This 177-nucleotide RNA was probed chemically with DMS and 2A3. 2A3 adducts were read by reverse transcription with SuperScript II with manganese. For DMS the reverse transcriptase was MarathonRT. The DMS profile rests on 3,403 reads.
RNA sequence: GGGAACGACUCGAGUAGAGUCGAAAAGUUCCAGGGUCACAUACAGGGUGCUGCCUGGCAGCCGGUAGUUGCCCGCCUCCGCCGCUGCCAUGCGGAUCGCCAGCAUUUCGGCGUGGGCACUGGGAUAUCGCUAAUUUAGGUUCGCCUAAAUUAGCGAAAAAGAAACAACAACAACAAC
Reactivity to DMS in 0.01 (KOAc 150mM, MgCl2 10mM, bicine 150mM(pH8.5), 24C), signal-to-noise 2, nucleotides 027 to 126: g010u000u000c000c000a040g010g000g010u010c020a100c020a040u010a080c070a180g000g030g020u000g010c020u000g010c040c060u000g000g000c010a010g010c070c040g000g010u010a020g020u000u000g020c030c020c060g020c130c020u000c020c010g010c090c110g010c040u000g010c010c020a040u000g010c060g020g000a070u030c050g010c110c020a050g020c040a050u010u000u010c050g020g010c030g050u000g010g000g010c000a040c030u000g000g000g010a020u000a070
Reactivity to 2A3 in 0.01 (KOAc 150mM, MgCl2 10mM, bicine 150mM(pH8.5), 24C), signal-to-noise 1, nucleotides 027 to 126: g020u000u040c010c000a020g030g040g030u040c020a020c060a300u150a070c090a100g080g040g090u030g020c020u040g000c010c040u000g020g010c010a010g060c040c040g000g000u060a060g010u040u110g080c000c030c030g000c000c000u020c000c000g080c050c000g000c020u010g000c020c000a010u050g020c020g040g050a110u140c060g000c060c000a030g010c010a110u080u200u270c080g050g000c020g000u000g000g000g000c000a020c000u010g000g000g000a000u000a040